[RMDB]
RNA sequence: GGGAACGACUCGAGUAGAGUCGAAAACGGAGCGGUGGCCCGCAUCCUGGCCUGGCGACCGUUGGUGUGGCUGGGCACCAUAUCGUACGGCGUCUAUCUGUGGCACUGGCCAAUCUUUCUGGCGCUCGUUCAAUGGAUCGUUCGCGAUCCAUUGAACAAAAGAAACAACAACAACAAC
Reactivity to DMS in 0.01 (KOAc 150mM, MgCl2 10mM, bicine 150mM(pH8.5), 24C), signal-to-noise 1, nucleotides 027 to 126: c160g010g000a070g000c030g020g020u000g010g020c120c000c050g000c010a120u000c010c020u020g000g020c040c040u000g010g020c030g010a080c020c040g030u000u030g020g010u000g020u010g010g030c000u000g010g010g030c070a080c080c010a100u000a060u000c040g000u020a060c060g010g030c030g010u000c000u000a060u020c080u000g010u010g010g010c090a140c080u010g010g030c000c000a090a070u020c050u000u000u000c110u000g000g000c050g000c010u010c100
Reactivity to 2A3 in 0.01 (KOAc 150mM, MgCl2 10mM, bicine 150mM(pH8.5), 24C), signal-to-noise 1, nucleotides 027 to 126: c040g000g010a060g000c010g030g030u130g110g050c000c020c070g030c020a180u010c020c020u020g070g000c000c050u020g000g010c040g190a300c020c000g100u050u140g020g000u140g010u020g110g000c030u040g010g070g040c030a010c000c000a040u040a070u010c110g010u070a030c030g000g000c020g010u070c010u040a070u010c060u070g040u070g040g000c000a060c220u080g160g040c030c000a090a130u090c110u130u160u030c090u030g020g000c000g000c030u040c120
Chemical mapping of a 177-nucleotide RNA with DMS and 2A3. High DMS reactivity at an A or C suggests that its Watson-Crick edge is free. The reactions ran in a buffer of 150 mM KOAc, 10 mM MgCl2 and 150 mM bicine (pH 8.5), at 24 C. For DMS the reverse transcriptase was MarathonRT. Values cover nucleotides 27 to 126.